[RMDB]
RNA sequence: GGGAACGACUCGAGUAGAGUCGAAAAGAUGCUAGACAACGGGAUCGCGGCGACCGCAUUCCUGCUCACCGCCGGGGUGCCGCUGAUCGUCGAACUUGGUGCCUCGCUGGACGUGCUGUUCGCGGUCAUCUGCAACCUAAUUCGUUAGGUUGCAGAUAAAAGAAACAACAACAACAAC
Reactivity to 2A3 in 0.01 (KOAc 150mM, MgCl2 10mM, bicine 150mM(pH8.5), 24C), signal-to-noise 9, nucleotides 027 to 126: g090a020u140g030c070u080a030g040a140c050a110a050c110g040g020g050a040u050c040g000c020g110g010c040g030a030c010c020g020c020a030u100u080c010c030u030g020c030u020c040a060c020c030g000c010c000g030g010g000g020u030g040c020c000g040c100u070g030a090u050c020g090u080c030g040a040a030c030u060u140g010g010u040g020c000c010u020c040g050c060u100g020g020a030c030g040u060g020c040u040g020u030u040c030g000c010g010g000u020c010
Reactivity to DMS in 0.01 (KOAc 150mM, MgCl2 10mM, bicine 150mM(pH8.5), 24C), signal-to-noise 5, nucleotides 027 to 126: g000a080u010g000c040u020a050g000a070c160a090a120c060g010g010g010a030u010c050g000c030g000g000c080g010a100c080c090g000c070a140u010u010c080c040u020g010c040u010c100a120c070c020g020c150c010g000g000g010g010u020g020c000c010g020c100u020g010a060u000c050g020u030c070g000a080a060c080u010u000g000g020u000g000c020c010u000c040g010c070u010g000g000a070c130g020u000g000c010u010g000u010u000c020g020c030g000g010u000c050
About this RNA:
Chemical mapping of a 177-nucleotide RNA with 2A3 and DMS. For 2A3 the reverse transcriptase was SuperScript II with manganese. Source: RMDB library OK1LIB, as collected in RNAgym. The reactions ran in a buffer of 150 mM KOAc, 10 mM MgCl2 and 150 mM bicine (pH 8.5), at 24 C.